Structure probing data (DMS and 2A3) for a 177-nucleotide construct. High DMS reactivity at an A or C suggests that its Watson-Crick edge is free. For 2A3, 1,166 sequencing reads were counted.

[RMDB]
RNA sequence: GGGAACGACUCGAGUAGAGUCGAAAAGCGAUCGUCCGCUAUUGCUUGUGUACCGCGCUAGAUGAAGCGGCUCACACCAUGUCGUGGGGCGUCAUGUCGGGUUGGUCGCAAAGCAACCUGCUCAACCCAUAUGGGGCUUGUUCGCAAGCCCCAUAUGAAAAGAAACAACAACAACAAC
Reactivity to DMS in 0.01 (KOAc 150mM, MgCl2 10mM, bicine 150mM(pH8.5), 24C), signal-to-noise 2, nucleotides 027 to 126: g010c020g010a060u010c120g020u000c070c040g020c040u010a050u010u020g000c090u000u010g000u000g040u010a130c040c000g020c040g040c110u000a110g000a230u000g020a220a270g040c010g000g000c040u000c010a010c020a100c300c070a080u000g010u000c110g020u020g010g040g000g010c050g000u000c060a050u010g030u000c050g000g000g000u010u000g030g010u000c060g020c060a050a070a120g000c040a040a050c050c030u020g020c050u000c080a070a070c100c060
Reactivity to 2A3 in 0.01 (KOAc 150mM, MgCl2 10mM, bicine 150mM(pH8.5), 24C), signal-to-noise 1, nucleotides 027 to 126: g000c030g050a030u060c060g080u050c030c010g000c010u050a050u010u230g080c050u050u000g010u000g010u050a000c020c020g000c030g050c200u160a160g070a300u200g220a300a050g000c000g080g020c020u030c030a010c000a030c000c080a130u170g010u120c080g010u110g020g040g000g050c010g050u040c030a060u050g080u100c010g010g000g020u040u180g060g010u000c030g000c000a000a100a000g010c000a020a020c000c030u050g060c020u000c040a080a120c000c000